[RMDB]
RNA sequence: GGGAACGACUCGAGUAGAGUCGAAAAACGGUGAGUACGCUCACCGAGCCGCUGAUGACCAAAGAUAUUUUACAAACUAGAGUUUCUGAUGGUCACGUGAUUAGGAACUAUCUUGCUAUCUGAGGAAGGUUCGUAUGGAUUUCGAUCCAUACGAACCAAAAGAAACAACAACAACAAC
Reactivity to DMS in 0.01 (KOAc 150mM, MgCl2 10mM, bicine 150mM(pH8.5), 24C), signal-to-noise 2, nucleotides 027 to 126: a100c020g000g010u000g010a020g040u010a060c300g000c000u000c000a000c000c010g000a030g000c010c030g000c080u000g000a070u000g010a080c010c000a020a240a000g000a010u010a020u000u050u000u020a100c220a060a080a210c200u000a080g000a050g000u010u000u000c000u000g000a150u000g000g000u000c020a050c140g000u000g020a050u000u000a030g000g000a080a050c080u000a120u020c040u000u020g000c030u000a060u010c060u000g000a300g000g000a200a160
Reactivity to 2A3 in 0.01 (KOAc 150mM, MgCl2 10mM, bicine 150mM(pH8.5), 24C), signal-to-noise 6, nucleotides 027 to 126: a020c010g000g000u000g010a000g010u030a060c250g030c060u000c000a000c000c000g000a020g060c010c010g020c100u140g040a250u060g020a020c020c010a000a060a010g070a040u050a050u060u110u100u130a140c170a100a170a010c030u090a040g020a010g070u010u010u040c020u010g140a190u100g020g040u060c020a030c050g100u120g060a080u050u220a040g010g060a010a010c020u070a110u140c030u010u090g030c030u020a040u090c030u040g050a040g090g090a070a140
The data come from the RNA Mapping Database (RMDB), libraries RFM100 and RFMREP. The record gives the reactivity of an RNA of 177 nucleotides to DMS and 2A3. DMS adducts were read by reverse transcription with MarathonRT. The RNA was probed in 150 mM KOAc, 10 mM MgCl2 and 150 mM bicine (pH 8.5) at 24 C. Values cover nucleotides 27 to 126. 2A3 adducts were read by reverse transcription with SuperScript II with manganese.